[RMDB]
Conditions: 150 mM KOAc, 10 mM MgCl2 and 150 mM bicine (pH 8.5), 24 C. The record gives the reactivity of an RNA of 207 nucleotides to DMS and 2A3.
RNA sequence: GGGAACGACUCGAGUAGAGUCGAAAAGGUCAAAAGUGGGGCGUAAAGCAAGGACGGUCCAAGGGUGAGUCGACCUCCCUCGGCACAAGGACGAGCCUGGUUUUGAGUGGGGGAGGAUGUUAUGGACAAAUUCCGUAACCAUGUUAGGCCAGCAUUGCACAAAACUCUUGUUCGCAAGAGUUUUGUGAAAAGAAACAACAACAACAAC
Reactivity to DMS in 0.01 (KOAc 150mM, MgCl2 10mM, bicine 150mM(pH8.5), 24C), signal-to-noise 1, nucleotides 027 to 156: g040g050u000c050a070a080a070a080g030u010g010g050g020g020c080g050u000a070a070a130g030c050a050a110g000g020a120c110g040g000u010c050c060a050a060g000g050g050u000g020a070g030u000c010g020a080c010c030u000c000c000c010u030c020g000g000c080a160c040a050a130g010g010a150c060g040a100g040c020c010u000g040g030u000u000u000u000g020a070g000u000g010g000g040g050g020a110g060g000a080u010g010u010u050a040u000g010g040a100c020a140a080a190u010u000c010c010g010u010a000a050c050c160a140u000g010u000u000a090g020g020c060c010a030g010c000a150u010u000g020
Reactivity to 2A3 in 0.01 (KOAc 150mM, MgCl2 10mM, bicine 150mM(pH8.5), 24C), signal-to-noise 2, nucleotides 027 to 156: g060g010u040c050a010a040a000a040g060u080g010g020g030g000c050g070u130a100a040a020g050c070a070a040g080g010a010c040g030g040u030c050c000a080a080g030g000g020u100g040a050g030u030c010g040a100c010c010u000c010c010c010u010c000g050g000c020a020c020a080a040g050g010a010c030g010a060g070c000c000u020g050g000u030u060u060u110g080a090g030u110g000g000g000g000g000a000g000g010a020u050g010u010u030a070u040g020g000a010c070a060a150a050u220u020c030c010g030u040a010a020c000c000a020u110g030u060u110a050g020g010c020c000a010g010c020a030u060u230g000
Background: 2A3 adducts were read by reverse transcription with SuperScript II with manganese. Reactivities are given for positions 27 through 156. High DMS reactivity at an A or C suggests that its Watson-Crick edge is free.